[RMDB]
RNA sequence: GGGAACGACUCGAGUAGAGUCGAAAAGAUUUUCGAUUCACAAAACGGUUUAGCAUCAGGACACAAAGUGCUCGUCACUUUGUAACAGUUUCCAGUCGUCGUUUGGCAGAAACCGUUUUGAUGAUGUCGCAUGUAAUUACUUCGGUAAUUACAUGCGAAAAGAAACAACAACAACAAC
Reactivity to DMS in 0.01 (KOAc 150mM, MgCl2 10mM, bicine 150mM(pH8.5), 24C), signal-to-noise 2, nucleotides 027 to 126: g000a130u020u000u010u000c000g030a040u000u020c000a110c000a000a020a000a000c010g020g040u020u000u000a140g000c030a050u020c050a090g000g010a020c060a060c000a000a000a020g030u000g040c050u040c220g000u010c000a010c000u010u000u000g000u000a060a100c210a080g010u000u010u000c040c020a190g010u000c050g020u010c030g030u000u010u010g000g000c000a160g000a040a030a010c000c010g010u000u000u040u000g000a070u010g000a050u000g010u010
Reactivity to 2A3 in 0.01 (KOAc 150mM, MgCl2 10mM, bicine 150mM(pH8.5), 24C), signal-to-noise 5, nucleotides 027 to 126: g070a020u050u060u040u060c050g070a080u020u020c010a000c000a020a000a010a010c000g000g010u020u040u070a030g010c000a050u100c060a030g020g050a010c020a000c000a030a000a000g000u010g010c040u140c140g300u300c010a000c000u030u010u010g000u020a020a020c030a060g070u040u130u060c060c050a050g040u030c030g020u010c010g050u090u200u180g060g000c030a030g140a040a000a010c000c010g000u010u000u000u000g020a030u000g000a000u030g040u020

Record summary:
Structure probing data (DMS and 2A3) for a 177-nucleotide construct. The reactions ran in a buffer of 150 mM KOAc, 10 mM MgCl2 and 150 mM bicine (pH 8.5), at 24 C. High 2A3 reactivity points to a flexible backbone, as in loops and unpaired stretches.